[RMDB]
RNA sequence: GGGAACGACUCGAGUAGAGUCGAAAAGAUAUGGAGAUUGUUUCUUUUGACGCUCCGUAGUCGGAAACGACUAUACGGAGCGAUAAGAAAGAAUCUCCUAAGUCAAAGGCUACCUUCGGGUAGCCAACGUAUUUACAGUGUUCGCACUGUAAAUACGAAAAGAAACAACAACAACAAC
Reactivity to DMS in 0.01 (KOAc 150mM, MgCl2 10mM, bicine 150mM(pH8.5), 24C), signal-to-noise 5, nucleotides 027 to 126: g010a030u000a300u010g010g010a020g010a010u000u000g000u000u000u000c000u000u000u000u010g020a260c140g020c000u000c000c000g020u000a020g010u000c010g000g000a090a090a150c000g010a020c010u010a120u010a080c040g010g000a010g020c010g020a010u000a000a010g010a020a020a020g000a020a010u010c000u000c000c000u000a020a050g000u000c030a110a160a190g010g010c000u000a000c000c000u000u010c230g020g010g020u000a000g010c000c000a010a030
Reactivity to 2A3 in 0.01 (KOAc 150mM, MgCl2 10mM, bicine 150mM(pH8.5), 24C), signal-to-noise 5, nucleotides 027 to 126: g020a010u060a030u140g000g010a020g000a020u020u020g150u260u080u020c040u070u160u130u240g290a190c090g000c000u010c000c000g000u000a000g000u000c000g000g000a040a050a020c000g000a000c020u050a060u040a150c020g000g000a000g000c000g000a000u030a010a010g000a010a010a000g070a000a000u000c000u000c000c000u010a060a010g010u000c010a150a090a070g000g000c000u000a000c000c000u040u140c300g130g000g000u000a010g000c000c000a000a000
The data come from the RNA Mapping Database (RMDB), library TTRDES. This 177-nucleotide RNA was probed chemically with DMS and 2A3. The 2A3 profile rests on 18,939 reads. The reactions ran in a buffer of 150 mM KOAc, 10 mM MgCl2 and 150 mM bicine (pH 8.5), at 24 C. 2A3 adducts were read by reverse transcription with SuperScript II with manganese. High DMS reactivity at an A or C suggests that its Watson-Crick edge is free.